[RMDB]
RNA sequence: GGGAACGACUCGAGUAGAGUCGAAAACGCACUCGCAGCUUAAUAACCUGCGCUGAGCCCUUCUCCCCCAGCUUGCCUGUGUCCUAGGGAAUUGGAAGGUCAUCCUUCACAGGAUCGUGUGGAAGCCAUUACUCGUGAGUGUUCGCACUCACGAGAACUAGAUAUAACCGUUCGCGGUUAUAUCUAGAAAAGAAACAACAACAACAAC
Reactivity to DMS in 0.01 (KOAc 150mM, MgCl2 10mM, bicine 150mM(pH8.5), 24C), signal-to-noise 2, nucleotides 027 to 156: c030g000c040a130c060u000c010g000c030a050g000c020u000u000a100a120u000a170a120c210c000u000g000c020g010c110u000g000a070g000c010c040c030u000u010c060u010c020c010c000c000c020a100g000c020u000u010g010c000c020u000g000u010g000u000c030c030u010a130g030g000g020a060a150u010u010g020g000a070a060g000g010u000c110a100u000c010c010u000u000c060a060c080a070g040g020a060u000c080g000u000g020u000g020g010a110a140g020c010c040a120u000u010a090c000u010c010g030u000g010a010g020u000g020u000u000c300g020c010a030c000u010c000a020c000g010a000g020a000a120
Reactivity to 2A3 in 0.01 (KOAc 150mM, MgCl2 10mM, bicine 150mM(pH8.5), 24C), signal-to-noise 3, nucleotides 027 to 156: c050g030c010a060c040u020c010g000c000a000g000c000u020u050a060a010u030a090a030c000c000u000g040c010g050c240u070g020a030g010c010c010c020u150u070c080u040c000c000c000c000c010a010g010c020u020u080g060c010c010u050g000u010g010u060c000c030u030a050g040g030g050a080a120u100u070g030g030a040a010g030g010u050c030a060u080c020c010u040u060c020a040c010a100g020g020a040u070c060g010u040g030u060g060g040a020a030g020c000c040a090u090u150a080c000u000c000g010u000g000a000g000u010g020u050u090c140g040c080a000c000u000c010a000c010g000a000g000a000a000